[RMDB]
RNA sequence: GGGAACGACUCGAGUAGAGUCGAAAAGCUGAGUAUACGAGGUAAGUUCAUUCUCGUAUGCAUGAUUGGACAAAUUAAAAUCUCAAUUUGGAUCAGGGCCUCCCUCCAGCGACGGCCGAACAUACAAGUUCACAGAGAAAUUCGUUUCUCUGUGAACAAAAGAAACAACAACAACAAC
Reactivity to 2A3 in 0.01 (KOAc 150mM, MgCl2 10mM, bicine 150mM(pH8.5), 24C), signal-to-noise 5, nucleotides 027 to 126: g000c010u020g020a000g040u000a000u000a010c000g010a000g030g060u110a070a130g130u100u260c070a060u210u050c000u000c000g000u010a000u010g000c010a060u060g010a060u030u100g050g010a020c010a030a040a030u070u110a120a160a150a290u110c110u030c130a030a040u020u020u040g070g010a130u070c040a070g010g010g010c000c000u000c010c000c000u040c000c020a010g000c010g020a040c030g000g010c010c010g020a020a020c030a000u160a040c020a090a070
Reactivity to DMS in 0.01 (KOAc 150mM, MgCl2 10mM, bicine 150mM(pH8.5), 24C), signal-to-noise 4, nucleotides 027 to 126: g010c010u000g010a230g020u000a010u000a000c010g000a020g020g020u000a060a170g020u000u000c190a090u010u000c010u000c010g010u000a000u000g000c010a110u000g010a070u000u000g000g000a080c010a020a020a030u010u010a070a070a120a070u000c180u010c090a030a020u010u000u000g000g000a100u000c020a090g000g000g010c020c000u000c020c000c030u010c100c010a030g000c020g010a080c150g010g000c010c040g010a050a050c110a060u000a090c220a040a120